Chemical mapping of a 177-nucleotide RNA with DMS. Values cover nucleotides 27 to 126. For DMS the reverse transcriptase was MarathonRT. It was measured as part of the RMDB library OK2TST.
[RMDB]
RNA sequence: GGGAACGACUCGAGUAGAGUCGAAAAUCGCCUAUUCACACGCAAUAUUGGUGAUCCAGUAACAUGCGCCAUAGCAGAUCUGAAGUGGUUCAUUAGGAGCGGGUUAAUCCCAGAGUUCAUCCUGAAGAAUUCACCCCUUCUUCGGAAGGGGUGAAUUAAAAGAAACAACAACAACAAC
Reactivity to DMS in 0.01 (KOAc 150mM, MgCl2 10mM, bicine 150mM(pH8.5), 24C), signal-to-noise 1, nucleotides 027 to 126: u000c070g060c030c020u010a090u000u020c070a250c220a140c200g000c080a100a090u000a070u000u010g010g040u010g010a030u000c030c090a030g030u010a070a120c180a040u020g000c090g010c030c070a090u000a070g020c050a030g020a100u000c070u010g010a080a080g010u000g010g010u000u010c050a020u000u010a050g000g010a080g040c050g020g000g010u010u010a090a150u010c020c010c010a150g040a010g000u000u000c090a120u000c020c020u020g000a060a060g020